[RMDB]
RNA sequence: GGGAACGACUCGAGUAGAGUCGAAAAGCCAGGCGGCGAUCGCGCGAUGCCCGUCGUUGGGUUCGACGUUGGCCACCAGAUAAUGGCGCCAUAGGUACCAUCCCCAGACCCGCUCGGGGUUGCGCAGAUUAUCUGGGACUUUCGAGUCCCAGAUAAUAAAAGAAACAACAACAACAAC
Reactivity to DMS in 0.01 (KOAc 150mM, MgCl2 10mM, bicine 150mM(pH8.5), 24C), signal-to-noise 4, nucleotides 027 to 126: g010c010c020a140g010g010c070g020g010c030g000a050u000c080g000c030g030c020g010a030u000g010c000c020c000g010u000c170g010u000u000g020g020g010u000u000c050g010a070c060g010u000u000g010g010c010c030a180c030c010a070g000a130u020a100a070u000g020g020c300g020c010c040a070u000a080g020g020u000a060c020c080a050u010c020c010c010c030a180g010a040c020c010c010g020c070u000c090g010g010g000g010u000u000g000c050g010c070a130g000
Reactivity to 2A3 in 0.01 (KOAc 150mM, MgCl2 10mM, bicine 150mM(pH8.5), 24C), signal-to-noise 2, nucleotides 027 to 126: g020c000c010a030g150g060c070g040g000c020g050a070u100c050g040c020g000c020g100a020u180g300c000c020c000g090u130c020g060u220u270g010g000g000u030u030c020g030a020c030g020u030u050g030g010c020c020a060c010c000a010g010a050u250a130a110u110g000g010c000g030c010c000a090u120a080g010g030u050a110c020c010a070u070c020c000c000c000a010g010a010c000c030c000g030c060u060c000g070g000g040g030u000u050g000c040g030c000a020g000